This 177-nucleotide RNA was probed chemically with DMS and 2A3.
In probing experiments dimethyl sulfate is read out at A N1 and C N3, which are open when not base-paired.
For 2A3 the reverse transcriptase was SuperScript II with manganese.
For 2A3, 2,335 sequencing reads were counted.
Reactivities are given for positions 27 through 126.
RNA sequence: GGGAACGACUCGAGUAGAGUCGAAAAAGGACAAUGCCCCGUGCACUCUCACUCAAGCACAGCAACACUUCAGGAAUCGACAGUGCAUGUCCUGGAGAAAGGGGCGGUGACCGUGCACUUUAGUACCCAUGGCCUUACGAUUCGUCGUAAGGCCAUGAAAAGAAACAACAACAACAAC
Reactivity to DMS in 0.01 (KOAc 150mM, MgCl2 10mM, bicine 150mM(pH8.5), 24C), signal-to-noise 3, nucleotides 027 to 126: a080g050g020a070c050a090a100u000g010c020c010c020c110g000u000g000c010a070c110u000c120u000c100a040c120u010c180a120a070g020c030a090c060a060g000c120a190a070c120a120c010u000u000c020a040g000g010a100a060u010c100g030a050c120a060g000u020g020c060a080u020g010u000c010c000u000g000g000a040g000a040a030a140g030g000g000g010c020g010g020u010g000a070c030c020g010u000g010c010a020c000u000u000u000a080g010u010a130c020c010
Reactivity to 2A3 in 0.01 (KOAc 150mM, MgCl2 10mM, bicine 150mM(pH8.5), 24C), signal-to-noise 2, nucleotides 027 to 126: a040g030g000a010c020a030a080u110g010c000c000c000c000g000u030g010c010a030c040u070c010u070c040a100c060u130c070a110a060g020c020a030c000a060g010c000a040a050c000a000c050u030u030c020a030g000g040a040a070u110c050g070a050c080a090g070u030g090c020a010u090g040u010c000c000u000g000g010a020g000a010a070a000g020g020g000g000c020g000g040u020g010a020c040c010g030u020g000c000a010c000u100u070u060a060g000u190a180c000c000